[RMDB]
RNA sequence: GGGAACGACUCGAGUAGAGUCGAAAAAGAGUGAUAAAGAGAACAAUACCUGCCCACAGGACUUGUUGCAAUGAGAUAAAGGCAGAAGUCACCAGUUGUGGUCAAAUGGGAUUUUUUUCCAGAGAAGGUAUUAGGACAAAUUCGUUUGUCCUAAUACAAAAGAAACAACAACAACAAC
Reactivity to 2A3 in 0.01 (KOAc 150mM, MgCl2 10mM, bicine 150mM(pH8.5), 24C), signal-to-noise 5, nucleotides 027 to 126: a000g140a020g040u120g040a070u180a130a120a030g080a010g030a060a000c020a020a050u070a110c010c020u010g000c010c010c000a010c000a000g070g030a020c010u030u040g100u110u020g090c030a060a090u110g010a080g020a200u140a090a190a040g040g000c000a000g000a050a010g010u030c020a030c110c010a080g100u160u050g010u040g040g020u020c020a000a070a120u090g010g010g020a010u110u030u020u000u020u030u010c030c010a030g050a000g040a170a030g120
Reactivity to DMS in 0.01 (KOAc 150mM, MgCl2 10mM, bicine 150mM(pH8.5), 24C), signal-to-noise 8, nucleotides 027 to 126: a080g000a100g010u000g010a090u010a050a100a100g010a080g000a090a060c070a050a040u010a070c060c030u000g010c140c010c020a040c040a060g010g000a030c030u000u010g000u010u000g010c010a050a040u000g000a150g010a300u010a090a090a110g000g010c020a020g000a030a020g000u000c020a090c170c140a090g010u010u000g030u010g000g010u000c050a030a060a100u000g000g000g000a010u000u010u000u000u010u000u000c010c040a100g010a120g000a100a100g000